Conditions: 150 mM KOAc, 10 mM MgCl2 and 150 mM bicine (pH 8.5), 24 C.
This 207-nucleotide RNA was probed chemically with DMS and 2A3.
For 2A3 the reverse transcriptase was SuperScript II with manganese.

RNA sequence: GGGAACGACUCGAGUAGAGUCGAAAAGUGUAACUUCGGUUACACGCACGACCUUUGUGUAGCGACGUAUGGGAGUCCGCGGAUCCCAUUGGGAUCCGGAAGGACGAAGAACAUAUGUCUGCUACACUCUGGUGAACGAGCGACCUUCGGGUCGCAAAACUUAAGCUACGUUCGCGUAGCUUAAGUUAAAAGAAACAACAACAACAAC
Reactivity to DMS in 0.01 (KOAc 150mM, MgCl2 10mM, bicine 150mM(pH8.5), 24C), signal-to-noise 3, nucleotides 027 to 156: g040u010g000u000a010a010c000u000u000c300g060g020u000u030a000c000a010c000g020c080a070c060g020a100c000c010u000u010u000g030u000g020u000a010g040c020g000a030c000g040u000a000u000g010g010g000a250g020u000c000c010g000c000g010g000a020u000c000c010c020a300u010u000g050g040g010a020u000c010c000g000g000a050a100g030g010a030c010g000a130a130g020a170a190c010a030u000a010u000g010u010c000u020g070c000u000a010c000a000c010u000c010u000g000g030u000g010a070a040c050g000a290g010c000g010a040c010c010u000u000c300g040g010g020u000c000g000c010a010a030
Reactivity to 2A3 in 0.01 (KOAc 150mM, MgCl2 10mM, bicine 150mM(pH8.5), 24C), signal-to-noise 4, nucleotides 027 to 156: g010u000g010u000a010a000c010u040u110c300g110g010u000u000a000c000a000c020g010c020a080c080g140a060c000c010u010u000u010g000u000g010u010a000g000c010g000a000c010g010u000a000u000g030g000g000a020g000u000c010c010g080c020g030g000a000u000c000c000c040a100u150u300g010g000g000a000u010c010c010g000g090a170a070g000g000a000c010g000a040a010g010a000a010c000a000u010a010u000g010u000c120u120g000c000u000a000c000a000c000u000c000u000g020g000u010g040a090a050c110g030a060g020c000g010a000c020c000u080u080c220g040g010g000u010c010g000c010a030a040

Source information:
The data come from the RNA Mapping Database (RMDB), library RNAMAK. For DMS, 7,893 sequencing reads were counted.